[RMDB]
RNA sequence: GGGAACGACUCGAGUAGAGUCGAAAAAGCAAUACCAACACCAUGGUUAUGGUUUAUUGUUAGAAGACACUGACUUCCCGGGUGGUUCCAGUGGUAGUCCGUUAUUUAACCAAAACAAACAGAUUAAGAAAAUAGAGAGUUUCGACUCUCUAUUUUCAAAAGAAACAACAACAACAAC
Reactivity to DMS in 0.01 (KOAc 150mM, MgCl2 10mM, bicine 150mM(pH8.5), 24C), signal-to-noise 4, nucleotides 027 to 126: a050g010c040a030a040u000a050c210c050a040a130c220a090c040c070a100u000g030g010u000u000a090u010g000g000u000u000u000a030u010u000g000u000u000a060g010a130a140g020a100c120a090c040u020g010a070c040u000u000c030c030c000g010g000g030u000g000g020u010u000c000c010a100g030u000g020g010u000a050g010u000c010c030g010u010u010a070u000u000u000a070a130c090c060a060a070a080a090c130a070a090a080c100a060g000a120u000u000a090a190
Reactivity to 2A3 in 0.01 (KOAc 150mM, MgCl2 10mM, bicine 150mM(pH8.5), 24C), signal-to-noise 2, nucleotides 027 to 126: a000g020c020a030a020u010a040c010c020a000a030c050a020c090c020a030u070g150g000u110u140a080u040g000g020u040u080u040a030u020u050g040u040u020a050g020a130a000g060a080c050a020c090u050g050a020c030u060u000c020c020c000g030g000g000u060g060g020u030u060c020c010a030g030u010g050g010u000a010g010u010c010c060g020u040u030a070u050u110u050a050a020c010c000a000a080a020a060c030a040a070a080c040a020g200a230u150u190a240a050